[RMDB]
RNA sequence: GGGAACGACUCGAGUAGAGUCGAAAAACACGUUACAAAAUAAAGCGCUUGGUGGGAUGAAAAAGCCUUUUUCUUCAAUGGUUGAUUUCCUUACGAUUUCAGCCUCUUCAUCGCUUAAUGAAGCGUAACAAUCACAGUCAUUCGUGACUGUGAUUGUAAAAGAAACAACAACAACAAC
Reactivity to 2A3 in 0.01 (KOAc 150mM, MgCl2 10mM, bicine 150mM(pH8.5), 24C), signal-to-noise 2, nucleotides 027 to 126: a010c070a010c020g080u150u120a090c110a070a180a140a110u220a120a210a020g000c030g090c140u050u030g070g030u030g000g140g000a010u000g040a000a010a000a000a080g110c000c040u010u040u030u080u110c050u140u080c070a070a090u170g000g000u010u010g000a000u000u000u010c030c000u050u110a040c060g030a000u010u030u020c000a020g000c000c000u000c030u030u030c000a030u040c000g050c130u050u100a040a030u230g110a010a040g000c000g000u010a010
Reactivity to DMS in 0.01 (KOAc 150mM, MgCl2 10mM, bicine 150mM(pH8.5), 24C), signal-to-noise 2, nucleotides 027 to 126: a170c070a070c070g010u020u020a190c040a070a120a120a120u000a080a090a060g000c000g020c190u000u000g030g000u010g010g000g030a010u000g000a030a020a060a050a050g030c140c090u000u000u000u000u000c050u000u000c120a110a070u010g000g010u010u000g020a030u000u000u010c020c140u020u000a150c250g000a030u000u000u020c010a020g010c000c000u010c060u000u000c020a050u000c040g020c040u000u000a070a080u010g030a090a050g010c070g020u000a110
The record gives the reactivity of an RNA of 177 nucleotides to 2A3 and DMS.
DMS adducts were read by reverse transcription with MarathonRT.
For 2A3, 1,006 sequencing reads were counted.
It was measured as part of the RMDB library OK2TST.